[RMDB]
Structure probing data (2A3 and DMS) for a 207-nucleotide construct. Reactivities are rounded to 0.1 and cut off at 0 and 3.
RNA sequence: GGGAACGACUCGAGUAGAGUCGAAAAUGUGAAUUGCAGAUUUUCGUGAAUCAUCAAAUCUUUGAACGCACAUUGCGCCCUCUGGUAUUCCAGGGGGCAUGCCUGUUUGAGCGUCAUUUCUCUCUCAAACCUUUGGGUUUGGUAGUGAGUGAUACUCCUUCAUAGUUCACUUCGGUGAACUAUGAAGAAAAGAAACAACAACAACAAC
Reactivity to 2A3 in 0.01 (KOAc 150mM, MgCl2 10mM, bicine 150mM(pH8.5), 24C), signal-to-noise 4, nucleotides 027 to 156: u050g000u020g010a040a090u090u120g060c040a020g020a040u060u050u110u260c170g050u160g160a150a120u170c070a040u070c050a080a020a030u010c040u060u120u150g060a060a030c040g030c020a000c010a020u020u080g040c050g000c020c000c000u010c000u000g020g020u150a180u270u140c000c000a000g010g000g000g000g010c000a010u060g010c000c000u080g030u050u070u080g010a010g000c000g060u000c010a000u090u300u040c010u000c000u000c000u000c000a000a000a000c020c000u080u120u300g080g000g000u000u000u000g010g000u000a010g000u000g000a000g000u000g000a000u010a030c000u010c010
Reactivity to DMS in 0.01 (KOAc 150mM, MgCl2 10mM, bicine 150mM(pH8.5), 24C), signal-to-noise 1, nucleotides 027 to 156: u000g010u000g020a050a020u000u000g010c060a060g000a090u010u010u000u000c090g020u010g010a150a140u020c090a140u010c070a070a000a040u010c010u000u010u000g000a020a030c030g000c030a000c020a050u000u000g020c130g030c010c010c000u000c000u000g010g000u010a100u000u020c010c000a030g030g010g000g060g050c000a000u000g020c030c060u010g000u010u000u010g010a020g030c020g020u000c010a020u000u010u000c020u010c000u020c020u000c000a000a010a010c000c020u000u020u020g040g050g040u000u000u020g040g000u010a020g020u000g010a070g030u000g000a040u000a020c000u000c020